Record summary:
The record gives the reactivity of an RNA of 177 nucleotides to 2A3 and DMS.

RNA sequence: GGGAACGACUCGAGUAGAGUCGAAAAUACAGGAGGGAGGGCUAUGUGCAGCGUUAAAAGAAGAAUGUUGUUUUUAUGCAGAUCACACCGGAUUAGUCCGAGAUAAUAUGGCUAAAUUAAGAGAAAGGACUAACUAUACAUUCGUGUAUAGUUAGUCAAAAGAAACAACAACAACAAC
Reactivity to 2A3 in 0.01 (KOAc 150mM, MgCl2 10mM, bicine 150mM(pH8.5), 24C), signal-to-noise 7, nucleotides 027 to 126: u210a020c040a030g030g010a020g020g040g000a050g020g030g000c020u080a080u100g070u040g030c020a020g010c030g060u100u170a090a140a020a040g200a060a020g030a100a070u040g000u010u000g000u010u010u030u030u050a090u090g030c040a020g000a090u040c010a000c010a020c070c030g020g000a020u010u060a030g070u010c010c030g020a030g030a060u130a130a020u100a090u160g030g000c010u010a080a080a160u210u100a100a040g060a030g050a120a070a020g060
Reactivity to DMS in 0.01 (KOAc 150mM, MgCl2 10mM, bicine 150mM(pH8.5), 24C), signal-to-noise 7, nucleotides 027 to 126: u030a090c110a120g010g000a100g000g000g010a080g010g000g010c050u020a030u010g010u020g030c030a060g010c060g020u020u010a070a060a060a080g000a100a110g010a100a100u020g000u000u000g000u000u010u000u010u000a050u040g010c030a050g010a080u020c040a060c120a100c090c040g000g000a080u000u020a060g030u010c010c030g000a070g000a080u030a030a100u020a070u020g000g000c060u000a040a040a050u040u030a060a070g010a090g000a080a120a090g000
For DMS, 15,640 sequencing reads were counted. DMS adducts were read by reverse transcription with MarathonRT.